[RMDB]
RNA sequence: GGGAACGACUCGAGUAGAGUCGAAAAGCCAUGAGUUUCGACUCAUGGCAAAAGCGCGUCAGCGCUACGAUGCAAGGGCAAGCGCGUCCAUCGUAAAUGACAAAAUUCUCGGGUUCGCCCGAGAAAAGAGACCUCAACACUUCGGUGUUGAGGUCUCAAAAGAAACAACAACAACAAC
Reactivity to 2A3 in 0.01 (KOAc 150mM, MgCl2 10mM, bicine 150mM(pH8.5), 24C), signal-to-noise 1, nucleotides 027 to 126: g010c010c000a000u000g000a000g010u140u050u270c240g060a000c020u000c000a000u060g000g060c000a000a000a000a000g000c010g000c010g080u110c020a250g300c080g040c000u000a010c000g010a000u070g080c190a220a110g010g100g010c040a040a130g210c090g060c020g300u110c010c000a020u030c000g000u050a080a130a160u060g000a000c090a020a120a010a140u060u000c000u000c000g000g000g000u000u010c150g050c000c000c000g000a010g060a000a040a000a000
Structure probing data (2A3) for a 177-nucleotide construct.
2A3 adducts were read by reverse transcription with SuperScript II with manganese.
The 2A3 profile rests on 573 reads.
The reactions ran in a buffer of 150 mM KOAc, 10 mM MgCl2 and 150 mM bicine (pH 8.5), at 24 C.
Values cover nucleotides 27 to 126.